[RMDB]
RNA sequence: GGGAACGACUCGAGUAGAGUCGAAAAACGGGGCUAGCUGCCGGGUGUUCCAUCCAUGGGAUCGGUGCCGAGUGAGGCUUAUCCCGGGGGGAUUGCCUCGGCCCCCUCCCUAACACGGGAGUCUCGGGAUUUAGGAAUUGUUCGCAAUUCCUAAAUCAAAAGAAACAACAACAACAAC
Reactivity to DMS in 0.01 (KOAc 150mM, MgCl2 10mM, bicine 150mM(pH8.5), 24C), signal-to-noise 4, nucleotides 027 to 126: a070c050g000g000g000g010c020u000a090g020c090u000g020c010c020g010g000g010u010g000u000u000c010c010a060u000c080c070a130u000g010g000g000a020u000c130g020g010u000g010c000c010g010a120g010u010g000a100g010g000c020u000u000a040u000c000c000c000g010g000g010g020g010g000a070u000u010g000c020c000u000c010g010g010c010c000c000c030c030u000c000c000c000u000a110a100c230a120c230g000g010g010a050g000u010c010u000c040g000g010
Reactivity to 2A3 in 0.01 (KOAc 150mM, MgCl2 10mM, bicine 150mM(pH8.5), 24C), signal-to-noise 3, nucleotides 027 to 126: a000c010g010g010g040g020c020u040a040g010c050u130g080c040c000g040g000g030u090g030u100u030c010c000a030u040c070c030a150u190g060g000g030a020u140c090g090g090u100g050c000c010g020a060g080u180g080a060g030g000c040u080u100a030u030c030c020c020g020g030g000g010g020g010a070u000u170g000c000c010u040c000g040g020c020c010c000c000c000u000c010c000c000u040a170a070c070a010c060g040g000g000a010g030u000c020u020c000g040g030